[RMDB]
RNA sequence: GGGAACGACUCGAGUAGAGUCGAAAACGACUAGACGCGACGGCGGGACGACGCGCGGUGACGUCGUGACGACAGGCGGCGACGGCGGGAUGACACGCGGUGACGGCUGAACGACAGGCGUCGAGUGGUCUUCAGGGGUUUUCGAACCCCUGAAGACAAAAGAAACAACAACAACAAC
Reactivity to DMS in 0.01 (KOAc 150mM, MgCl2 10mM, bicine 150mM(pH8.5), 24C), signal-to-noise 2, nucleotides 027 to 126: c050g000a120c000u030a070g020a020c060g010c030g010a110c100g000g000c050g040g000g000a110c000g000a080c120g000c120g080c000g070g040u020g000a030c150g040u000c030g100u000g000a030c110g000a200c150a090g000g000c050g040g000c030g000a020c150g000g000c020g000g000g030a070u160g000a140c050a080c030g030c070g000g000u040g030a080c040g020g000c000u020g060a070a080c200g000a130c100a070g000g010c060g000u000c020g000a070g010u000g000
Reactivity to 2A3 in 0.01 (KOAc 150mM, MgCl2 10mM, bicine 150mM(pH8.5), 24C), signal-to-noise 2, nucleotides 027 to 126: c000g050a000c020u030a000g090a060c000g080c030g050a170c020g040g020c010g000g000g010a010c030g000a000c020g020c000g000c010g050g000u020g000a030c030g010u000c000g020u020g030a040c030g050a010c030a040g000g070c000g000g050c000g040a000c000g020g020c010g000g000g020a040u060g060a030c040a020c120g050c010g000g110u090g050a060c040g020g000c010u010g040a160a000c000g120a030c010a110g040g030c000g030u030c020g000a010g030u100g030

The record gives the reactivity of an RNA of 177 nucleotides to DMS and 2A3. Source: RMDB library OK1LIB, as collected in RNAgym. DMS adducts were read by reverse transcription with MarathonRT. 2A3 adducts were read by reverse transcription with SuperScript II with manganese. The reactions ran in a buffer of 150 mM KOAc, 10 mM MgCl2 and 150 mM bicine (pH 8.5), at 24 C. Values are in units of 0.01, from 0 to 300, in steps of 10. High 2A3 reactivity points to a flexible backbone, as in loops and unpaired stretches.